[RMDB]
RNA sequence: GGGAACGACUCGAGUAGAGUCGAAAAGACAGGGCCCAACGCUUCACAACCUGAAAGAAGCGCCUGUUAUCAGGACGGUUGAUCCAUUUACCGGUGCAGACCUCUGCAAACACCGGGUUGCAGAACAUAGAGGGAAAUUUGUUCGCAAAUUUCCCAAGGAUAACCUAUUGUUCGCAAUAGGUUAUCCAAAAGAAACAACAACAACAAC
Reactivity to DMS in 0.01 (KOAc 150mM, MgCl2 10mM, bicine 150mM(pH8.5), 24C), signal-to-noise 1, nucleotides 027 to 156: g000a190c050a040g000g000g070c030c000c060a050a130c030g010c000u000u010c030a190c030a140a170c090c050u010g010a080a130a280g010a030a030g010c000g000c000c060u000g010u020u010a150u000c030a050g030g030a120c010g000g060u000u030g020a200u000c060c050a130u000u020u000a060c020c010g010g000u010g020c010a120g010a100c040c030u020c050u000g020c060a140a100a030c010a070c030c010g000g010g000u000u010g060c000a030g000a050a100c100a100u020a130g000a180g030g020g000a000a020a030u000u000u000g030u000u020c300g020c010a030a050a000u000u010u000c000c000c020a000a080
Reactivity to 2A3 in 0.01 (KOAc 150mM, MgCl2 10mM, bicine 150mM(pH8.5), 24C), signal-to-noise 2, nucleotides 027 to 156: g100a020c030a010g020g050g030c000c020c000a070a010c000g010c010u050u010c010a040c020a160a090c000c030u100g050a080a070a050g020a040a000g010c000g090c020c000u080g030u140u130a200u300c020a010g080g000a020c060g050g000u030u000g010a100u070c040c060a020u040u060u120a100c010c000g000g000u040g020c000a000g080a200c000c050u150c030u160g010c060a030a080a000c020a010c040c000g010g010g020u000u070g030c060a010g040a150a040c050a090u140a090g150a250g030g000g000a000a010a000u010u000u010g010u020u060c080g030c140a000a010a000u010u000u010c030c000c010a000a000
This 207-nucleotide RNA was probed chemically with DMS and 2A3.
For DMS, 1,771 sequencing reads were counted.